[RMDB]
RNA sequence: GGGAACGACUCGAGUAGAGUCGAAAAGCACAGCCUUCUGGUCCAGCGCUGCAUGCGGCCUCAGGACCACGUCUUCCGGUUGGGGGCUCCCAGUAAAGCGAUCCUCAGCUUCUUCAGCAGCCAGUGGCCAGUGAGAGCACUGACACGGCUCCCGGGAAAAUAUGAGCCAUUUCGAUGGCUCAUAUUUAAAAGAAACAACAACAACAAC
Reactivity to 2A3 in 0.01 (KOAc 150mM, MgCl2 10mM, bicine 150mM(pH8.5), 24C), signal-to-noise 2, nucleotides 027 to 156: g020c020a000c030a070g050c030c010u040u030c000u000g010g000u000c020c010a050g030c040g000c190u010g000c010a150u080g040c020g030g000c010c020u040c030a040g000g070a000c030c020a050c070g100u060c070u160u050c080c040g090g050u040u060g040g000g020g020g050c040u080c000c010c000a080g020u130a030a080a030g030c000g070a110u080c020c040u070c080a010g010c000u090u060c020u160u210c080a030g000c000a000g000c000c000a110g000u300g140g010c060c000a010g010u090g060a090g000a010g000c010a020c070u070g070a030c020a000c100g100g040c030u080c020c000c010g000g040g010a050
Reactivity to DMS in 0.01 (KOAc 150mM, MgCl2 10mM, bicine 150mM(pH8.5), 24C), signal-to-noise 1, nucleotides 027 to 156: g020c040a070c090a180g040c060c010u000u020c040u010g050g000u000c010c010a270g040c110g050c030u000g020c020a080u000g000c100g030g020c000c050u010c140a080g030g020a020c010c040a020c050g010u010c070u010u040c010c020g020g010u010u010g030g010g030g010g040c020u000c050c030c020a220g010u020a020a070a070g010c000g000a150u010c060c010u010c070a210g040c000u000u000c030u020u000c040a110g080c030a070g030c020c010a170g000u000g030g020c020c020a040g040u010g000a030g050a130g000c010a090c070u010g000a100c050a090c060g030g020c020u020c030c000c080g000g040g010a100
Source: RMDB library OK3TST, as collected in RNAgym. This 207-nucleotide RNA was probed chemically with 2A3 and DMS. High DMS reactivity at an A or C suggests that its Watson-Crick edge is free. The RNA was probed in 150 mM KOAc, 10 mM MgCl2 and 150 mM bicine (pH 8.5) at 24 C. The 2A3 profile rests on 838 reads.